[RMDB]
RNA sequence: GGGAACGACUCGAGUAGAGUCGAAAAUCGAUGUUCGCAUCGAGAAAUCUCCUAAGUCACAUUGGAGUCAUCCCCGAGGAUCUAUCUCGGAAACGAGAUAGGGAGGAGGAUGACGCGAAACAAUGUGAUAUGGAACCAGAGGGAGUUCGCUCCCUAAGUCCAAAGAUCUCUUCGGAGAUCUUUGGACAAAAGAAACAACAACAACAAC
Reactivity to 2A3 in 0.01 (KOAc 150mM, MgCl2 10mM, bicine 150mM(pH8.5), 24C), signal-to-noise 1, nucleotides 027 to 156: u030c010g000a000u020g070u140u130c300g000c040a000u000c000g020a000g040a090a120a020u080c050u000c000c020u070a120a070g040u000c000a000c000a000u000u000g060g030a050g020u000c000a010u010c020c000c000c020g000a300g010g000a000u010c000u000a000u000c000u010c000g010g000a030a040a010c010g000a020g000a000u000a000g000g000g000a020g000g000a020g010g000a000u000g000a020c000g010c010g090a170a210a000c010a000a020u000g000u000g000a000u000a040u020g030g040a020a040c060c050a030g060a040g180g040g010a030g000u080u110c140g030c040u060c000c000c000u060a030a060
The record gives the reactivity of an RNA of 207 nucleotides to 2A3. The RNA was probed in 150 mM KOAc, 10 mM MgCl2 and 150 mM bicine (pH 8.5) at 24 C. For 2A3, 1,027 sequencing reads were counted. It was measured as part of the RMDB library RNAMAK.